This 177-nucleotide RNA was probed chemically with 2A3 and DMS. It was measured as part of the RMDB library TTRDES.
RNA sequence: GGGAACGACUCGAGUAGAGUCGAAAAGAUAUGGAGCCGCAUUGUCAGAUGGUCCCGUCGGAAACGACGGAACCAUCUUGGAUUUAUGCAGGCUCCUAAGUCAAAGUUGCACGUUCGCGUGCAACAACACGAUACUCAACUUCGGUUGAGUAUCGUGAAAAGAAACAACAACAACAAC
Reactivity to 2A3 in 0.01 (KOAc 150mM, MgCl2 10mM, bicine 150mM(pH8.5), 24C), signal-to-noise 1, nucleotides 027 to 126: g070a010u080a050u190g000g000a020g020c020c000g040c000a020u010u030g000u020c000a010g020a010u000g040g000u020c000c010c000g010u010c000g000g100a030a030a070c020g010a000c010g000g020a000a000c000c000a000u000c000u000u110g040g000a000u050u300u300a000u010g050c300a300g020g000c020u000c010c020u000a060a010g020u000c040a000a000a190g010u010u020g010c020a010c000g020u090u080c300g030c050g100u000g020c000a000a000c000a010a010
Reactivity to DMS in 0.01 (KOAc 150mM, MgCl2 10mM, bicine 150mM(pH8.5), 24C), signal-to-noise 2, nucleotides 027 to 126: g000a080u000a300u000g000g020a030g000c000c000g000c000a010u010u020g000u020c000a030g000a020u010g000g020u000c000c010c000g060u000c000g020g010a170a090a300c010g000a020c000g000g000a000a000c000c000a000u000c010u020u010g050g000a010u000u000u000a000u000g000c010a060g070g030c000u000c000c000u000a010a090g010u000c040a140a120a190g000u000u000g010c010a000c000g010u000u000c270g020c020g020u000g000c000a000a010c010a120a200
About this RNA:
For 2A3 the reverse transcriptase was SuperScript II with manganese. High DMS reactivity at an A or C suggests that its Watson-Crick edge is free.